[RMDB]
RNA sequence: GGGAACGACUCGAGUAGAGUCGAAAACGAGGGAUUCUUGUGCUGCAAAGUGACAGACACAUUGAACGGGGAGAGGGUCUCUUUUCCCGUGUGCACGUAUGUGCCAGCUACAUUGUGUGACCAAAUGGUCUAGUGAUCGAUUCGUCGAUCACUAGACAAAAGAAACAACAACAACAAC
Reactivity to 2A3 in 0.01 (KOAc 150mM, MgCl2 10mM, bicine 150mM(pH8.5), 24C), signal-to-noise 3, nucleotides 027 to 126: c040g000a080g030g030g040a020u060u060c010u030u070g020u060g040c030u010g000c030a110a080a050g040u050g050a040c040a090g110a070c000a000c010a030u050u090g030a070a000c020g000g000g020g000a040g000a010g040g090g120u050c070u000c000u190u000u000u000c000c000c000g030u060g000u020g010c020a000c050g080u240a070u280g010u000g030c010c010a020g050c010u050a030c020a100u120u030g040u010g020u050g090a060c010c030a030a040a150u220g070
Reactivity to DMS in 0.01 (KOAc 150mM, MgCl2 10mM, bicine 150mM(pH8.5), 24C), signal-to-noise 4, nucleotides 027 to 126: c100g010a080g010g010g000a080u000u000c030u010u010g000u000g000c040u000g010c040a040a070a070g020u010g010a140c140a120g010a120c020a020c030a100u000u000g000a130a070c050g010g010g010g010a060g000a010g010g010g010u010c090u010c000u000u000u000u000c000c000c000g020u000g010u010g020c030a020c030g010u000a030u010g030u000g010c020c020a090g000c070u000a060c080a050u010u010g020u010g010u000g000a170c030c060a080a080a100u020g010
The data come from the RNA Mapping Database (RMDB), library OK2TST. The record gives the reactivity of an RNA of 177 nucleotides to 2A3 and DMS. 2A3 adducts were read by reverse transcription with SuperScript II with manganese. For DMS the reverse transcriptase was MarathonRT.